[RMDB]
RNA sequence: GGGAACGACUCGAGUAGAGUCGAAAAUAACCAACUGAUCUAGCAGACUUUGGUCACCUAAGGCAGUAGGCUAAAGUUUGUUAGCGUGCACACCGAGCUAGUUAGGAGAAUGCCAUUGCCGAGGUUAACCUAGUAGUAGGUUCGCCUACUACUAGGUAAAAGAAACAACAACAACAAC
Reactivity to DMS in 0.01 (KOAc 150mM, MgCl2 10mM, bicine 150mM(pH8.5), 24C), signal-to-noise 9, nucleotides 027 to 126: u010a110a200c010c020a110a110c140u000g000a100u010c010u000a010g010c010a020g000a010c010u000u000u010g010g010u000c030a070c080c050u010a090a120g020g010c150a080g020u000a090g000g010c010u000a010a020a010g010u000u000u000g010u000u000a010g000c200g000u000g010c060a050c070a100c070c040g000a070g000c040u000a050g010u010u000a060g000g000a090g010a060a070u000g010c020c030a080u000u000g010c030c020g000a090g000g010u010u010a080
Reactivity to 2A3 in 0.01 (KOAc 150mM, MgCl2 10mM, bicine 150mM(pH8.5), 24C), signal-to-noise 8, nucleotides 027 to 126: u050a010a030c010c010a020a050c070u100g050a120u080c000u010a000g000c000a000g010a020c000u010u020u020g000g000u010c000a010c030c030u110a130a110g190g010c060a040g090u150a100g020g000c010u000a010a010a010g000u000u010u010g010u000u000a000g020c010g030u060g010c020a030c010a020c080c020g030a020g030c020u070a030g060u120u050a050g030g040a060g070a100a050u110g020c010c010a040u030u070g020c010c020g030a060g050g050u050u090a030
Chemical mapping of a 177-nucleotide RNA with DMS and 2A3. Values cover nucleotides 27 to 126. For DMS the reverse transcriptase was MarathonRT. For DMS, 16,328 sequencing reads were counted.